Notes
Chemical mapping of a 177-nucleotide RNA with DMS and 2A3. The data come from the RNA Mapping Database (RMDB), library OK2TRN. The reactions ran in a buffer of 150 mM KOAc, 10 mM MgCl2 and 150 mM bicine (pH 8.5), at 24 C. Values cover nucleotides 27 to 126.
[RMDB]
RNA sequence: GGGAACGACUCGAGUAGAGUCGAAAAAGAGCCUUAGGUCGCGCAGAGGCCGCAGACUGCUCGUCUCGGGGAGCCAGCGGCAGCUGACGCACGUGGGCCGUGAGCAGGUGCGGCUGCUCAACAAGUGACUAUGUCUGGGUUUCGACCCAGACAUAGUAAAAGAAACAACAACAACAAC
Reactivity to DMS in 0.01 (KOAc 150mM, MgCl2 10mM, bicine 150mM(pH8.5), 24C), signal-to-noise 2, nucleotides 027 to 126: a090g000a120g010c000c000u000u010a140g030g000u000c170g040c020g030c010a040g000a040g010g030c000c000g030c000a020g010a030c020u000g010c000u000c000g000u020c160u010c060g020g010g000g010a060g020c010c000a070g010c000g030g000c030a030g020c000u000g010a110c020g020c000a020c000g020u000g000g010g010c030c040g020u010g000a020g000c000a010g000g030u000g000c100g010g020c000u000g000c000u010c020a070a070c240a120a120g010u020g000
Reactivity to 2A3 in 0.01 (KOAc 150mM, MgCl2 10mM, bicine 150mM(pH8.5), 24C), signal-to-noise 1, nucleotides 027 to 126: a040g080a030g010c050c010u090u090a150g190g020u080c050g020c000g020c040a000g010a030g040g000c000c000g040c010a000g010a100c020u050g130c020u100c020g300u060c200u150c100g000g000g020g020a000g010c020c010a010g000c010g060g000c000a020g040c000u020g070a150c030g050c010a020c040g070u120g010g000g000c050c010g070u050g010a000g000c030a010g030g000u140g100c040g060g050c040u010g000c030u010c000a000a040c030a030a020g240u180g160